Conditions: 150 mM KOAc, 10 mM MgCl2 and 150 mM bicine (pH 8.5), 24 C. Structure probing data (DMS and 2A3) for a 177-nucleotide construct. The DMS profile rests on 61,700 reads. DMS adducts were read by reverse transcription with MarathonRT. Reactivities are given for positions 27 through 126.
RNA sequence: GGGAACGACUCGAGUAGAGUCGAAAAAUGGUGACGCCGUCCGGACCUAUCCAGGCAGGGCUGUCCUGAGCUUCGACGGGAGAAUUGACAGCAGCCCUCCAGCAGCUCAUUCGGCCUUUGAUGCCGGUCUACCUAGGGGGUUCGCCCCCUGGGUAGGAAAAGAAACAACAACAACAAC
Reactivity to DMS in 0.01 (KOAc 150mM, MgCl2 10mM, bicine 150mM(pH8.5), 24C), signal-to-noise 9, nucleotides 027 to 126: a070u020g010g010u010g010a080c070g010c020c010g020u000c000c030g000g010a080c050c030u000a060u020c050c050a060g000g000c080a060g000g000g020c020u010g000u010c050c060u010g000a170g010c020u000u000c030g010a130c180g010g000g000a080g000a080a110u020u020g000a120c110a070g000c020a080g000c040c020c010u000c030c030a090g000c080a060g000c040u010c050a080u030u020c010g000g000c010c020u020u020u030g000a090u030g010c000c000g000g010
Reactivity to 2A3 in 0.01 (KOAc 150mM, MgCl2 10mM, bicine 150mM(pH8.5), 24C), signal-to-noise 9, nucleotides 027 to 126: a000u090g020g010u040g020a020c020g010c020c000g030u020c000c000g020g010a030c010c010u020a030u020c020c010a020g000g010c020a000g010g010g000c010u000g020u040c000c010u020g010a000g020c010u020u030c020g090a070c040g040g030g010a030g020a030a100u070u060g050a020c010a010g000c000a010g000c010c000c000u000c000c000a020g000c020a010g000c010u010c020a070u140u060c010g010g000c010c000u060u060u190g050a050u040g000c010c000g010g010